An RNA of 207 nucleotides, treated with 2A3 and read out base by base.
For 2A3, 784 sequencing reads were counted.
The RNA was probed in 150 mM KOAc, 10 mM MgCl2 and 150 mM bicine (pH 8.5) at 24 C.

RNA sequence: GGGAACGACUCGAGUAGAGUCGAAAAACAAACUGCUUUAUGACUCUCCAGACCGUGUCAUAUCACAAGUUUGCCUUGCACUAUACAAAGACAUGUCAAUGCAAAUUUCAAAGGCAAUGAAAGAAAUGCCAGCAACAGGACUUUUAGCAUUGCGCAAGGAGUAGGUAGGUUUCGACCUACCUACUCCAAAAGAAACAACAACAACAAC
Reactivity to 2A3 in 0.01 (KOAc 150mM, MgCl2 10mM, bicine 150mM(pH8.5), 24C), signal-to-noise 2, nucleotides 027 to 156: a000c040a000a040a030c020u020g010c050u100u000u040a020u040g010a010c010u040c010u060c130c070a060g050a200c020c080g030u000g000u000c000a020u020a010u090c030a020c070a110a050g000u010u000u000g020c010c000u080u150g050c100a030c060u070a070u210a180c060a040a150a070g080a060c040a060u130g020u090c040a020a010u010g020c010a060a060a060u020u100u030c060a130a020a000g060g000c020a010a050u120g060a090a030a090g100a020a130a000u020g010c020c030a030g020c050a070a040c010a120g020g140a020c000u000u070u140u100a030g030c000a030u000u040g010c070g010c080a100a070